[RMDB]
RNA sequence: GGGAACGACUCGAGUAGAGUCGAAAACGCUGGGUUGAUACUCGCCUGUAGCAAGCUGGUACAUCAUCUGAAGCGCGCACGGAUGAUGUACCAGUGAUGACCUACAGGGCGAAAGGUCAACCUGUGCUGAAGCGCGCACGGCAACCGAAAGGUGCGAGAUACUCUAACUGUUCGCAGUUAGAGUAUCAAAAGAAACAACAACAACAAC
Reactivity to DMS in 0.01 (KOAc 150mM, MgCl2 10mM, bicine 150mM(pH8.5), 24C), signal-to-noise 2, nucleotides 027 to 156: c080g000c040u020g010g020g000u000u000g010a060u000a030c010u000c010g040c010c010u000g010u000a020g000c000a050a110g030c000u030g000g000u000a010c010a030u000c000a010u000c000u000g020a040a090g010c010g050c010g040c000a300c010g000g020a020u010g010a030u000g020u000a010c010c000a000g030u000g000a050u010g000a060c300c000u000a000c030a070g050g020g000c030g020a030a070a050g010g000u000c000a000a000c000c020u000g020u000g020c020u000g020a110a060g010c000g050c000g020c020a070c060g030g000c040a090a300c000c050g020a090a110a200g010g040u000g010c040g000a230
Reactivity to 2A3 in 0.01 (KOAc 150mM, MgCl2 10mM, bicine 150mM(pH8.5), 24C), signal-to-noise 5, nucleotides 027 to 156: c040g000c020u080g000g000g000u000u000g010a010u070a170c030u040c050g010c000c000u010g000u000a000g010c080a300a140g000c030u000g000g000u000a000c000a000u000c000a000u000c000u040g040a180a040g030c010g000c000g000c020a030c030g010g010a000u010g000a000u000g020u000a000c000c000a000g000u010g000a010u010g020a010c010c000u000a010c010a040g050g120g010c010g000a130a070a000g030g000u000c000a000a010c010c010u010g010u040g000c020u070g030a100a020g010c020g000c010g010c000a010c030g060g010c030a130a170c010c010g060a120a020a040g010g010u020g010c020g020a110
This 207-nucleotide RNA was probed chemically with DMS and 2A3. The reactions ran in a buffer of 150 mM KOAc, 10 mM MgCl2 and 150 mM bicine (pH 8.5), at 24 C.